[RMDB]
RNA sequence: GGGAACGACUCGAGUAGAGUCGAAAAAGACCUCGAUGAAGCGGGGCUGACCGCGGAGACGCAGAGCUUCCAUCUGUUGGGGACUGAGCUCCUCGGGCGAGCGGAUGGCAUUGAGCUGGCAGAACUCUGCUCUGUACCUAUUCGUAGGUACAGAGCAAAAAGAAACAACAACAACAAC
Reactivity to DMS in 0.01 (KOAc 150mM, MgCl2 10mM, bicine 150mM(pH8.5), 24C), signal-to-noise 2, nucleotides 027 to 126: a070g020a130c020c010u000c020g000a100u010g010a140a160g040c050g020g010g000g010c050u000g010a140c040c020g010c120g000g010a050g000a130c030g010c030a040g010a090g000c040u010u010c020c010a050u010c150u000g000u000u020g010g000g010g000a060c030u010g010a080g020c050u000c010c000u010c030g000g000g020c100g020a090g000c040g000g010a050u010g010g020c300a060u020u010g010a100g010c000u010g000g040c000a070g010a040a110c120u010c060
Reactivity to 2A3 in 0.01 (KOAc 150mM, MgCl2 10mM, bicine 150mM(pH8.5), 24C), signal-to-noise 1, nucleotides 027 to 126: a000g080a120c050c000u000c030g100a150u170g150a080a030g190c020g020g000g040g000c010u030g040a070c000c010g000c020g040g020a010g010a030c020g000c040a010g000a040g110c010u220u050c050c010a090u010c090u200g150u140u100g020g000g010g000a030c030u100g060a030g000c010u000c000c020u000c000g050g000g040c080g030a040g000c040g110g000a020u010g100g000c080a060u040u170g020a060g000c000u010g060g020c000a000g050a110a050c040u060c060